[RMDB]
RNA sequence: GGGAACGACUCGAGUAGAGUCGAAAAAAACAGAGAUUAUAGCAUAGAGUGAAGAACUUAGAGGGAUAGUUGAUAAACUUUGAUGUGCUUUUUUGAUUGCGUCUUUAGAAUUUUCUUCAUACAACAACUUACCGUUUCAGUUCGCUGAAACGGUAAGAAAAGAAACAACAACAACAAC
Reactivity to 2A3 in 0.01 (KOAc 150mM, MgCl2 10mM, bicine 150mM(pH8.5), 24C), signal-to-noise 1, nucleotides 027 to 126: a000a000a020c140a000g010a000g000a020u120u150a170u300a070g030c000a010u110a060g040a000g060u010g000a060a040g000a060a000c040u050u070a030g040a040g020g060g000a060u110a030g070u080u100g000a130u020a030a050a000c000u030u020u130g070a040u170g050u010g030c000u120u060u010u080u190u210g070a000u080u060g000c010g000u010c000u040u040u070a090g040a080a120u040u030u050u180c020u110u100c060a050u040a160c040a050a000c000a020a020
Reactivity to DMS in 0.01 (KOAc 150mM, MgCl2 10mM, bicine 150mM(pH8.5), 24C), signal-to-noise 1, nucleotides 027 to 126: a030a030a090c030a090g000a120g000a030u000u000a130u000a080g030c020a040u000a100g020a070g020u010g020a100a120g000a040a010c040u000u000a130g000a050g020g030g010a130u000a020g030u010u010g000a100u000a040a080a090c020u000u010u000g010a090u000g010u000g000c000u020u000u000u020u000u000g000a130u010u000g030c100g000u000c010u000u000u010a070g050a060a100u000u000u000u000c040u000u010c110a120u020a040c130a020a050c210a030a130
An RNA of 177 nucleotides, treated with 2A3 and DMS and read out base by base.
It was measured as part of the RMDB library OK2TST.
The 2A3 profile rests on 723 reads.
For 2A3 the reverse transcriptase was SuperScript II with manganese.
For DMS the reverse transcriptase was MarathonRT.